The record gives the reactivity of an RNA of 207 nucleotides to 2A3. The reactions ran in a buffer of 150 mM KOAc, 10 mM MgCl2 and 150 mM bicine (pH 8.5), at 24 C.
RNA sequence: GGGAACGACUCGAGUAGAGUCGAAAAGAACUUUGGCCGGCUCGGAUUAGAAUCAGGGGGUGCAAACUGCCCACUGGCAGAAAGGAUUAUAGCAAAUGCGUACCCUAUUGCAAUACAGCCCGGCCAACAUAGACUACUCUAUUCGUAGAGUAGUCAACUCGGAUGAAAGUUUCGACUUUCAUCCGAGAAAAGAAACAACAACAACAAC
Reactivity to 2A3 in 0.01 (KOAc 150mM, MgCl2 10mM, bicine 150mM(pH8.5), 24C), signal-to-noise 1, nucleotides 027 to 156: g060a070a010c010u000u050u020g000g000c000c000g000g030c010u020c170g030g000a030u000u050a090g090a050a000u150c080a110g000g000g100g000g020u120g000c020a010a120a070c000u010g000c000c020c060a140c190u130g040g000c010a000g020a010a060a010g160g020a040u100u160a170u240a160g020c040a010a130a130u060g060c020g090u200a050c000c000c000u050a070u020u110g130c030a010a010u010a070c010a000g050c040c040c000g000g000c020c000a000a000c000a020u080a020g000a010c000u000a010c000u010c000u000a030u080u030c090g000u030a000g000a000g000u000a000g000u000c000a000a000
Overview: 2A3 adducts were read by reverse transcription with SuperScript II with manganese. Source: RMDB library M2RFPK, as collected in RNAgym.